RNA sequence: GGGAACGACUCGAGUAGAGUCGAAAAGAUAUUAACGCGCGUGCUGUGUCUAACGCGAAUUACCCAGUUAUUUUCCACUUUACUCGAGUCGUUAUAGCGUGAUAUGACACAGUUAUCCGCGAACGAAGAGUGAUAGAGAGUUCGCUCUCUAUCACUCAAAAGAAACAACAACAACAAC
Reactivity to DMS in 0.01 (KOAc 150mM, MgCl2 10mM, bicine 150mM(pH8.5), 24C), signal-to-noise 3, nucleotides 027 to 126: g010a140u010a060u020u000a080a130c170g000c010g030c050g000u000g000c010u000g000u000g000u000c000u000a070a020c010g000c000g020a040a090u010u000a130c080c050c060a110g010u000u010a100u000u000u000u000c010c080a020c010u000u000u000a010c000u000c010g000a010g000u000c000g000u000u000a020u010a080g010c000g020u010g000a050u010a040u000g000a020c020a020c040a030g000u010u000a020u000c050c010g010c000g000a070a150c130g000a120a130
Reactivity to 2A3 in 0.01 (KOAc 150mM, MgCl2 10mM, bicine 150mM(pH8.5), 24C), signal-to-noise 2, nucleotides 027 to 126: g020a010u180a040u260u150a090a050c040g000c010g020c020g060u040g000c020u000g000u000g010u080c040u070a100a000c010g000c010g010a020a060u120u070a100c020c050c030a020g070u060u070a120u100u010u030u010c020c010a000c010u000u000u000a020c000u000c010g010a000g000u000c000g000u000u000a010u010a000g010c010g040u090g020a020u020a010u130g010a010c010a000c000a040g000u060u020a020u070c040c010g000c030g010a050a000c030g010a080a090

The data come from the RNA Mapping Database (RMDB), library M2PK90. An RNA of 177 nucleotides, treated with DMS and 2A3 and read out base by base. Values cover nucleotides 27 to 126. DMS adducts were read by reverse transcription with MarathonRT. Conditions: 150 mM KOAc, 10 mM MgCl2 and 150 mM bicine (pH 8.5), 24 C. The DMS profile rests on 2,807 reads.